[RMDB]
RNA sequence: GGGAACGACUCGAGUAGAGUCGAAAACCAAACUCUUCUUCGCCUCUAGAACUAGGGGCUGAGAUUUGGUUUCCUUGUUUUCCUGAUGCCUCCCAUGCCUAUUGUUCUCAGAUGCUCCUUCCUCUUCGAUCGUCAGAUAGUUCGCUAUCUGACGAUCAAAAGAAACAACAACAACAAC
Reactivity to DMS in 0.01 (KOAc 150mM, MgCl2 10mM, bicine 150mM(pH8.5), 24C), signal-to-noise 3, nucleotides 027 to 126: c000c000a030a020a040c150u000c040u010u000c140u010u020c300g020c000c000u000c010u000a020g000a100a110c210u000a010g000g000g000g050c010u010g020a020g000a050u000u000u000g010g000u000u000u010c030c010u000u000g010u010u010u000u000c020c010u010g000a130u010g010c040c020u000c020c020c030a090u000g000c030c010u010a090u000u010g010u000u000c010u010c050a070g010a100u010g020c040u000c040c030u000u000c030c030u010c080u000u000c300
Reactivity to 2A3 in 0.01 (KOAc 150mM, MgCl2 10mM, bicine 150mM(pH8.5), 24C), signal-to-noise 1, nucleotides 027 to 126: c000c000a050a030a000c100u040c020u110u050c030u160u100c090g030c000c000u040c000u040a140g050a300a150c110u020a010g000g000g060g000c000u000g000a000g000a010u010u030u020g030g010u030u030u070c000c030u040u040g070u020u050u010u050c020c000u030g070a210u180g080c000c000u040c000c010c000a010u030g050c020c000u100a080u060u110g030u080u000c050u010c000a030g030a110u050g010c030u050c010c020u080u070c010c020u000c080u010u010c020

Notes:
An RNA of 177 nucleotides, treated with DMS and 2A3 and read out base by base. As a SHAPE reagent, 2A3 marks flexible, mostly unpaired nucleotides at the ribose 2'-OH. Source: RMDB library RFMREP, as collected in RNAgym. The reactions ran in a buffer of 150 mM KOAc, 10 mM MgCl2 and 150 mM bicine (pH 8.5), at 24 C. Reactivities are given for positions 27 through 126. For 2A3 the reverse transcriptase was SuperScript II with manganese.